[RMDB]
RNA sequence: GGGAACGACUCGAGUAGAGUCGAAAAGAUAUGGAGAUCUGGCCUUUUGACGCCGUUCGGAAACGAACGAAGCGAUAAGGCUUGAUCUCCUAAGUCAAAGGAACAACUGCUUCGGCAGUUGUUCCAAGAAUCCAUUCAUGUUCGCAUGAAUGGAUUCAAAAGAAACAACAACAACAAC
Reactivity to 2A3 in 0.01 (KOAc 150mM, MgCl2 10mM, bicine 150mM(pH8.5), 24C), signal-to-noise 4, nucleotides 027 to 126: g010a010u030a020u080g000g010a000g000a000u000c010u020g030g040c020c000u100u200u130u300g090a050c010g000c010c010g010u000u000c000g000g010a040a020a010c010g000a000a000c020g040a150a030g020c010g030a050u060a290a120g000g000c000u000u000g000a000u000c000u000c000c000u000a020a000g000u000c030a080a050a150g010g000a010a000c000a000a000c020u020g020c020u100u170c300g050g000c000a000g000u010u000g000u000u000c000c000a000a000
Reactivity to DMS in 0.01 (KOAc 150mM, MgCl2 10mM, bicine 150mM(pH8.5), 24C), signal-to-noise 4, nucleotides 027 to 126: g000a020u010a300u000g000g000a010g010a000u000c000u000g000g010c000c000u000u000u000u000g020a150c050g010c020c020g010u000u000c000g000g000a070a070a140c000g010a010a000c000g000a110a100g020c000g000a120u010a030a030g010g010c000u000u000g000a010u000c000u000c000c010u000a000a060g010u000c020a050a110a150g010g010a020a010c000a000a010c000u000g000c000u000u010c240g020g000c000a010g000u000u000g000u000u010c000c000a040a030

The data come from the RNA Mapping Database (RMDB), library TTRDEL.
This 177-nucleotide RNA was probed chemically with 2A3 and DMS.
The RNA was probed in 150 mM KOAc, 10 mM MgCl2 and 150 mM bicine (pH 8.5) at 24 C.
Reactivities are given for positions 27 through 126.
DMS adducts were read by reverse transcription with MarathonRT.
The DMS profile rests on 6,248 reads.